[RMDB]
RNA sequence: GGGAACGACUCGAGUAGAGUCGAAAAUAAACUGGUGCUGGAUUAUCAGGAGAAACCGCACCAAUUCACGGUGAAGCACUUUGAGCUGAAGACGCUUUAUGCCGAUGAGUGGAAGCCUGAUCCGCAGGCUCAUUUAGGAGUUCGCUCCUAAAUGAGCAAAAGAAACAACAACAACAAC
Reactivity to 2A3 in 0.01 (KOAc 150mM, MgCl2 10mM, bicine 150mM(pH8.5), 24C), signal-to-noise 9, nucleotides 027 to 126: u150a010a060a040c080u030g020g000u020g030c080u220g030g070a160u100u090a070u200c020a030g050g040a060g090a130a170a000c010c010g000c000a010c000c000a000a010u020u020c020a010c030g020g000u060g030a010a010g020c010a010c030u040u050u090g170a150g080c130u110g090a030a010g070a080c060g000c010u060u060u030a140u260g030c010c020g130a180u030g020a020g030u070g020g050a050a010g020c010c000u010g020a050u010c020c010g030c030a030g080
Reactivity to DMS in 0.01 (KOAc 150mM, MgCl2 10mM, bicine 150mM(pH8.5), 24C), signal-to-noise 3, nucleotides 027 to 126: u030a050a090a110c130u030g020g000u000g060c010u010g030g010a110u000u010a150u000c060a070g040g000a090g010a100a040a040c020c010g000c030a020c000c010a030a020u020u000c040a030c010g000g030u000g010a010a020g010c000a160c040u000u010u020g020a150g000c220u060g000a060a010g000a130c130g010c000u000u010u020a050u070g000c010c000g000a120u000g000a030g060u020g000g000a050a070g010c000c000u010g000a030u020c030c040g000c150a080g010